Notes:
Source: RMDB library OK3TST, as collected in RNAgym. An RNA of 207 nucleotides, treated with 2A3 and read out base by base. For 2A3 the reverse transcriptase was SuperScript II with manganese.
RNA sequence: GGGAACGACUCGAGUAGAGUCGAAAAUCGGGAUCGUCGACAACCUCGCCACCACCGACGACGGACAGACGCUCGUCGGCGACUUCGUUGGCGUGCCAGCGUGGCUCGCUUCCGCCGACACCGAAGGACGGUCGGUCAUCGCGUCGGCCUACCCCGAUGUCGCAGUUAGAUUCGUCUAACUGCGACAAAAAGAAACAACAACAACAAC
Reactivity to 2A3 in 0.01 (KOAc 150mM, MgCl2 10mM, bicine 150mM(pH8.5), 24C), signal-to-noise 2, nucleotides 027 to 156: u010c000g000g000g010a010u040c010g010u030c030g020a020c030a110a100c000c040u050c050g000c020c000a050c000c020a030c000c020g020a020c000g070a100c000g050g030a050c050a110g100a080c010g020c130u020c080g010u010c000g000g000c000g050a050c000u240u110c050g110u060u100g000g010c000g010u000g020c040c070a050g030c170g220u170g080g000c000u030c090g000c060u070u030c010c000g010c020c000g000a020c000a040c020c070g020a030a000g050g110a020c050g060g000u000c080g000g040u030c000a050u140c030g000c010g010u000c010g000g010c000c000u060a050c000c000c050c000g020a030

Conditions: 150 mM KOAc, 10 mM MgCl2 and 150 mM bicine (pH 8.5), 24 C.